Overview
Chemical mapping of a 177-nucleotide RNA with 2A3 and DMS. The 2A3 profile rests on 999 reads. The reactions ran in a buffer of 150 mM KOAc, 10 mM MgCl2 and 150 mM bicine (pH 8.5), at 24 C. DMS adducts were read by reverse transcription with MarathonRT. High DMS reactivity at an A or C suggests that its Watson-Crick edge is free. The data come from the RNA Mapping Database (RMDB), library OK2TST. For DMS, 663 sequencing reads were counted.
RNA sequence: GGGAACGACUCGAGUAGAGUCGAAAAAGAACGAGAUGCUCGCCAUACCGAUGGAACUUAUCGCGCAUCUGGGCGCCGUCUCGAAAGAAGUAGCAAUUGCCAUGGCGGAAGGUGCGCUCGUGCAUUAGACCUGAGGGUAGUUCGCUACCCUCAGGUCAAAAGAAACAACAACAACAAC
Reactivity to 2A3 in 0.01 (KOAc 150mM, MgCl2 10mM, bicine 150mM(pH8.5), 24C), signal-to-noise 1, nucleotides 027 to 126: a000g050a060a000c060g010a020g000a070u030g020c020u060c040g000c010c010a070u030a140c020c030g050a030u010g020g080a050a160c010u110u120a180u290c030g000c010g000c010a030u000c000u010g000g000g060c020g000c000c000g070u070c030u050c040g040a020a040a000g040a050a020g060u100a020g000c100a120a220u110u210g010c050c020a090u120g010g050c000g000g000a070a000g080g000u030g000c010g010c000u020c020g020u010g050c020a010u100u030a030
Reactivity to DMS in 0.01 (KOAc 150mM, MgCl2 10mM, bicine 150mM(pH8.5), 24C), signal-to-noise 1, nucleotides 027 to 126: a090g020a110a060c070g000a070g030a050u000g000c080u050c010g000c010c010a060u000a260c160c050g000a020u000g050g050a180a090c210u010u000a020u020c080g000c010g000c020a010u000c080u010g000g020g040c020g000c300c030g000u010c040u020c020g000a050a100a050g000a030a140g000u020a130g000c030a220a040u000u000g000c000c030a060u020g010g000c020g020g030a110a050g020g050u010g000c030g050c000u000c020g020u000g020c100a100u000u000a180